[RMDB]
RNA sequence: GGGAACGACUCGAGUAGAGUCGAAAAGGGGUCUUUCGACUAUUCGAGACAUGCUCGCGUGGCUGAAGCCUCCACGGCCACUGAAUGAGCAACAGCUCGAACGAAUCGAAAGACGGAGGCACCCAAAGUAUCCUCAUUGUUCGCAAUGAGGAUACAACUUUGGGUCUAGCUUCGGCUAGACCCAAAGAAAAGAAACAACAACAACAAC
Reactivity to 2A3 in 0.01 (KOAc 150mM, MgCl2 10mM, bicine 150mM(pH8.5), 24C), signal-to-noise 2, nucleotides 027 to 156: g070g050g020g000u000c010u000u020u020c000g010a010c080u120a160u050u040c030g010a000g050a050c140a230u300g010c000u000c010g060c010g000u010g000g000c000u010g040a100a010g010c000c000u000c000c020a000c000g010g010c000c020a050c050u160g110a190a180u270g000a000g030c000a030a080c080a110g030c030u020c010g000a030a040c040g120a090a200u050c010g000a020a000a000g000a000c010g010g000a000g010g000c000a050c000c000c000a030a090a000g000u010a000u020c000c000u000c000a000u000u020g030u080u060c240g040c150a000a000u000g040a010g010g000a020u020a010c000a000a000
An RNA of 207 nucleotides, treated with 2A3 and read out base by base. For 2A3, 1,617 sequencing reads were counted. 2A3 adducts were read by reverse transcription with SuperScript II with manganese. The data come from the RNA Mapping Database (RMDB), library RNAMAK.